[RMDB]
RNA sequence: GGGAACGACUCGAGUAGAGUCGAAAAGAUAUGGAAGCCUUGGACCAUAGACUCCGAUGAAAGUGACCACUGCUAUCGGAAACGAUAGCAGUGGUCACUGGAGGAGCUAUGCUAGGCUUCCUAAGUCCUUAAAUAGCUCGUUCGCGAGCUAUUUAAGAAAAGAAACAACAACAACAAC
Reactivity to DMS in 0.01 (KOAc 150mM, MgCl2 10mM, bicine 150mM(pH8.5), 24C), signal-to-noise 1, nucleotides 027 to 126: g000a150u010a300u020g010g020a000a000g030c000c020u020u000g020g010a200c300c030a000u010a020g000a300c000u000c010c010g000a140u010g000a170a150a030g000u010g010a030c000c000a010c020u010g000c000u010a000u070c010g000g000a120a090a300c000g010a010u010a010g030c000a000g030u000g000g010u010c000a000c000u000g010g000a080g010g020a010g000c010u000a000u000g000c050u000a010g030g010c000u000u010c000c010u010a060a060g000u000c040
Background
This 177-nucleotide RNA was probed chemically with DMS. Reactivities are given for positions 27 through 126. Conditions: 150 mM KOAc, 10 mM MgCl2 and 150 mM bicine (pH 8.5), 24 C. It was measured as part of the RMDB library TTRINS. The DMS profile rests on 1,077 reads.